[RMDB]
About this RNA
This 177-nucleotide RNA was probed chemically with DMS and 2A3. Reactivities are rounded to 0.1 and cut off at 0 and 3. For DMS the reverse transcriptase was MarathonRT. Values cover nucleotides 27 to 126. The reactions ran in a buffer of 150 mM KOAc, 10 mM MgCl2 and 150 mM bicine (pH 8.5), at 24 C. For DMS, 1,834 sequencing reads were counted.
RNA sequence: GGGAACGACUCGAGUAGAGUCGAAAAUCUAUCACCAGCCCAUGUUUACGACACGAAUGGGCUGUUGCAAAUUACGUAUAGCUCUUGCAACAUCGUGUCGAAACGAUCCCAAGCUAUACGCCACAAAUGGAGAAGUACCAUUCGUGGUACUUCUCCAAAAAGAAACAACAACAACAAC
Reactivity to DMS in 0.01 (KOAc 150mM, MgCl2 10mM, bicine 150mM(pH8.5), 24C), signal-to-noise 3, nucleotides 027 to 126: u000c060u000a160u000c050a070c060c040a060g000c010c030c000a070u010g010u000u000u000a090c080g000a050c040a050c060g050a160a050u010g010g000g000c070u000g000u000u000g000c090a020a030a090u010u010a160c010g010u000a010u000a010g000c010u040c240u020u000g000c060a030a040c060a060u000c030g020u000g010u000c070g000a080a020a040c100g020a080u000c020c060c020a130a040g010c020u000a010u000a010c020g020c120c130a040c110a030a090a110
Reactivity to 2A3 in 0.01 (KOAc 150mM, MgCl2 10mM, bicine 150mM(pH8.5), 24C), signal-to-noise 1, nucleotides 027 to 126: u000c000u000a130u060c030a010c090c010a000g010c000c010c000a010u040g180u090u100u060a120c110g060a060c020a010c050g070a060a060u050g000g020g020c000u020g000u000u030g000c000a010a080a120u200u060a080c010g010u020a000u000a010g000c010u000c020u140u060g050c020a080a000c000a040u020c000g020u020g030u050c030g030a130a000a010c050g010a000u000c000c020c000a010a000g000c010u000a050u020a010c020g000c050c030a200c030a020a130a050